[RMDB]
RNA sequence: GGGAACGACUCGAGUAGAGUCGAAAAGCUGAGGAGGCAGUAGACAGCAACGUACUGGCCAAACCAUUCGUGAAGGGUGGUUGGCGUAAGCAGGACUACCGUAUCGCCCAGGCGGACUUCAGCCUGACCGCUAUUCAUAAUUCGUUAUGAAUAGCGGAAAAGAAACAACAACAACAAC
Reactivity to 2A3 in 0.01 (KOAc 150mM, MgCl2 10mM, bicine 150mM(pH8.5), 24C), signal-to-noise 6, nucleotides 027 to 126: g030c020u030g020a020g060g030a040g000g050c040a000g010u020a010g020a040c030a020g030c020a070a040c060g050u070a040c050u090g070g000c010c000a060a070a160c010c010a020u020u030c040g040u120g300a240a140g010g010g010u000g000g000u000u020g000g010c010g010u070a020a020g040c010a010g030g020a030c020u040a050c010c010g050u060a060u110c040g020c020c010c010a020g000g020c020g030g050a090c050u080u040c070a020g010c010c010u030g040a050
Reactivity to DMS in 0.01 (KOAc 150mM, MgCl2 10mM, bicine 150mM(pH8.5), 24C), signal-to-noise 8, nucleotides 027 to 126: g020c030u000g000a090g000g010a140g000g010c030a060g010u010a080g010a110c070a070g010c060a090a070c140g020u000a070c050u000g000g010c010c020a020a050a080c000c010a020u000u000c010g010u010g010a140a220g000g000g020u000g010g010u000u000g000g000c010g010u010a030a090g010c030a050g000g000a090c040u000a080c040c020g000u000a070u000c100g000c030c030c030a080g010g010c020g010g000a120c130u000u000c060a100g010c010c020u000g000a230
Description:
The record gives the reactivity of an RNA of 177 nucleotides to 2A3 and DMS. The data come from the RNA Mapping Database (RMDB), library OK2TST. The 2A3 profile rests on 20,475 reads.